This 207-nucleotide RNA was probed chemically with DMS and 2A3. Reactivities are given for positions 27 through 156. The reactions ran in a buffer of 150 mM KOAc, 10 mM MgCl2 and 150 mM bicine (pH 8.5), at 24 C. Source: RMDB library ARCHII, as collected in RNAgym.
[RMDB]
RNA sequence: GGGAACGACUCGAGUAGAGUCGAAAAUCGGAUCGGUUCUGAUGUGGGCAUGUUUCUGAGCUGCCCAGUCCAAGCUGUGAGUAAUUAGUGUUGAGUUGAGCGAAGGCUUGGCUCAUGCAGGUUCUAGAGUCGGAGGGUAAUGCGUGAGGCUGGCUUCCUCAUUAGCUAGGUUCGCCUAGCUAAUGAGAAAAGAAACAACAACAACAAC
Reactivity to DMS in 0.01 (KOAc 150mM, MgCl2 10mM, bicine 150mM(pH8.5), 24C), signal-to-noise 1, nucleotides 027 to 156: u000c020g000g030a030u000c000g020g020u010u010c040u000g020a110u000g070u010g060g010g000c000a070u010g010u000u000u000c140u000g030a090g000c060u000g040c010c020c000a110g010u000c010c060a070a160g050c020u010g020u020g010a180g020u000a080a080u000u000a100g020u000g020u000u000g000a120g030u000u020g010a040g020c000g040a170a110g000g030c000u000u000g060g040c020u010c000a060u000g010c020a100g000g030u000u000c080u000a120g010a110g040u000c020g000g020a110g020g010g050u020a050a100u020g010c050g010u010g000a120g030g010c040u000g030g000c060u000u000c020
Reactivity to 2A3 in 0.01 (KOAc 150mM, MgCl2 10mM, bicine 150mM(pH8.5), 24C), signal-to-noise 1, nucleotides 027 to 156: u110c010g050g050a030u050c050g040g020u130u050c030u050g040a050u070g020u090g100g010g000c050a080u140g080u040u100u030c110u160g100a050g000c030u020g010c000c010c000a000g000u010c010c010a030a010g020c020u050g010u070g060a030g040u130a140a110u090u170a070g020u040g050u060u030g020a020g020u020u000g010a010g030c060g040a120a020g160g010c020u010u020g030g000c000u010c000a010u040g000c020a010g040g060u100u040c040u110a050g000a020g110u080c050g020g020a060g010g010g020u090a080a020u070g010c030g020u040g010a020g030g000c010u010g010g010c000u040u020c020
DMS adducts were read by reverse transcription with MarathonRT.